[RMDB]
RNA sequence: GGGAACGACUCGAGUAGAGUCGAAAAGGACUACCCGUCAGGGUUAGGGCCAUACGGACAGCCGGGUCCACUGCCGGAAAGAAAACAAAACAAAACAAAAACAAAACAAAACAAAAACAAAAGAAAAACGUAGUACGGAUUUCGAUCCGUACUACGUAAAAGAAACAACAACAACAAC
Reactivity to DMS in 0.01 (KOAc 150mM, MgCl2 10mM, bicine 150mM(pH8.5), 24C), signal-to-noise 1, nucleotides 027 to 126: g030g000a040c000u000a020c000c020c000g040u000c300a020g000g000g000u000u120a090g000g000g020c170c040a040u040a300c140g000g030a020c110a300g080c050c040g000g000g000u000c000c000a140c090u090g040c000c000g000g050a020a000a050g000a040a000a150a170c120a080a060a100a020c090a160a110a160a090c140a040a020a000a180a050c040a050a090a040a070c140a050a000a040a030c070a020a090a000a090a300c280a000a040a000a020g000a020a300a120a090
Reactivity to 2A3 in 0.01 (KOAc 150mM, MgCl2 10mM, bicine 150mM(pH8.5), 24C), signal-to-noise 3, nucleotides 027 to 126: g070g020a050c010u030a040c070c030c000g060u120c030a050g010g040g010u060u140a030g030g030g000c000c000a080u100a070c030g010g050a020c010a030g150c030c000g000g000g010u000c000c060a090c130u040g000c000c000g030g000a000a110a010g080a030a080a020a000c080a000a160a040a000c080a010a090a020a000c080a030a130a090a020a000c030a050a100a030a010c080a020a100a020a000c050a010a160a080a020a000c040a000a100a010a070g060a070a070a050a010